[RMDB]
RNA sequence: GGGAACGACUCGAGUAGAGUCGAAAAGUCACUCAAUUCGUUGAGUGACAUACUGGGCCCGGAGUCGCGCAUCAAAGGGUCAAGACGCGCUCGAUAAAAUAACUAGUUGCCAGUUCGCUGGCAACAAGAGAGCUAUUGAGUUCGCUCAAUAGCUCUCAAAAGAAACAACAACAACAAC
Reactivity to 2A3 in 0.01 (KOAc 150mM, MgCl2 10mM, bicine 150mM(pH8.5), 24C), signal-to-noise 2, nucleotides 027 to 126: g010u000c000a010c000u000c000a020a020u150u040c170g060u110u030g010a000g000u010g000a000c000a000u050a010c000u080g010g030g000c000c010c030g040g000a030g000u220c040g010c010g000c130a070u030c060a060a170a080g160g050g010u040c040a010a040g050a030c000g030c000g020c020u030c050g080a120u120a130a130a070a020u100a070a030c070u040a070g000u010u000g000c020c000a000g010u000u010c190g000c070u000g000g000c000a000a000c000a000a000
Reactivity to DMS in 0.01 (KOAc 150mM, MgCl2 10mM, bicine 150mM(pH8.5), 24C), signal-to-noise 1, nucleotides 027 to 126: g010u000c000a010c000u000c000a010a020u000u010c200g020u000u000g010a000g010u010g010a010c000a020u000a020c090u000g000g030g000c000c010c000g010g010a230g000u000c110g030c110g010c040a130u040c100a070a110a130g020g000g040u000c020a100a150g010a040c010g000c080g010c050u000c010g010a050u030a040a050a090a080u010a040a080c180u030a110g010u000u000g010c000c000a030g040u000u010c210g000c000u030g000g000c000a000a000c000a080a030

About this RNA: Structure probing data (2A3 and DMS) for a 177-nucleotide construct. It was measured as part of the RMDB library M2PK50. The reactions ran in a buffer of 150 mM KOAc, 10 mM MgCl2 and 150 mM bicine (pH 8.5), at 24 C. Reactivities are given for positions 27 through 126. The 2A3 profile rests on 2,107 reads. For DMS the reverse transcriptase was MarathonRT.